[RMDB]
RNA sequence: GGGAACGACUCGAGUAGAGUCGAAAAGCGCCCCUUUUCGAAGGGGCGCACUGGAAAUAAAGCCGAUAGGCUAGGCAUUCCUUAUUUGGCGAAAGCCUGCCACUAUUGAGAUCUUCGGAUCUCAAAACUCUUAUGAUGAAUUCGUUCAUCAUAAGAGAAAAGAAACAACAACAACAAC
Reactivity to 2A3 in 0.01 (KOAc 150mM, MgCl2 10mM, bicine 150mM(pH8.5), 24C), signal-to-noise 7, nucleotides 027 to 126: g020c000g000c000c000c000c010u010u030u020u100c190g110a020a000g010g000g020g020c020g010c000a000c000u020g040g080a040a090a080u120a080a120a020g010c020c010g080a180u160a180g030g000c040u020a010g010g000c010a050u020u070c000c000u080u170a290u140u170u150g030g000c040g040a050a010a010g020c000c000u010g010c020c010a060c050u100a210u100u080g000a000g000a010u010c010u030u070c260g090g000a010u000c000u000c000a000a010a010a000
Reactivity to DMS in 0.01 (KOAc 150mM, MgCl2 10mM, bicine 150mM(pH8.5), 24C), signal-to-noise 5, nucleotides 027 to 126: g010c010g020c000c000c000c000u000u000u000u010c160g020a030a020g010g010g000g020c000g020c000a000c050u000g000g010a070a070a100u000a060a160a100g000c000c010g020a160u010a100g010g010c000u000a040g000g010c070a130u000u000c010c010u000u000a100u000u020u010g000g010c020g000a110a080a120g020c010c010u000g010c020c010a140c280u010a120u000u000g000a010g010a000u000c000u000u020c160g020g010a010u000c010u000c000a010a020a090a170